An RNA of 177 nucleotides, treated with DMS and 2A3 and read out base by base. For DMS the reverse transcriptase was MarathonRT. 2A3 adducts were read by reverse transcription with SuperScript II with manganese. High 2A3 reactivity points to a flexible backbone, as in loops and unpaired stretches. The reactions ran in a buffer of 150 mM KOAc, 10 mM MgCl2 and 150 mM bicine (pH 8.5), at 24 C.

RNA sequence: GGGAACGACUCGAGUAGAGUCGAAAAGAUAUGGAGAAGUAAGAGCUGAUGACCCUAAGUAUGUCGGAAACGACAUACGAUGGCAAGGCUUAUCUUCUCCUAAGUCAAAGACUGCUUCGGCAGUCAACAAAGACAGUGACUUCGGUCACUGUCUUUGAAAAGAAACAACAACAACAAC
Reactivity to DMS in 0.01 (KOAc 150mM, MgCl2 10mM, bicine 150mM(pH8.5), 24C), signal-to-noise 2, nucleotides 027 to 126: g000a030u010a300u010g030g000a030g010a060a010g010u000a060a270g020a020g020c010u000g030a120u000g000a160c300c000c050u010a100a280g000u000a000u000g000u000c010g010g010a080a110a210c000g030a020c000a000u000a000c000g010a120u000g010g010c010a090a050g000g010c000u020u000a130u010c000u000u000c000u000c000c000u020a000a040g000u000c060a110a110a120g010a020c000u000g020c020u000u000c240g000g000c000a000g010u010c000a020a090
Reactivity to 2A3 in 0.01 (KOAc 150mM, MgCl2 10mM, bicine 150mM(pH8.5), 24C), signal-to-noise 1, nucleotides 027 to 126: g020a000u060a030u150g030g000a030g000a040a020g050u180a300a280g010a010g040c000u040g020a250u220g090a300c020c000c010u020a120a000g000u020a010u020g010u000c010g000g000a120a020a000c010g010a000c000a000u010a000c020g000a030u060g020g010c050a090a090g020g000c000u010u020a050u030c000u000u000c000u000c000c000u010a060a000g000u040c030a130a000a000g000a030c010u020g000c020u050u050c180g200g000c040a000g000u000c000a010a000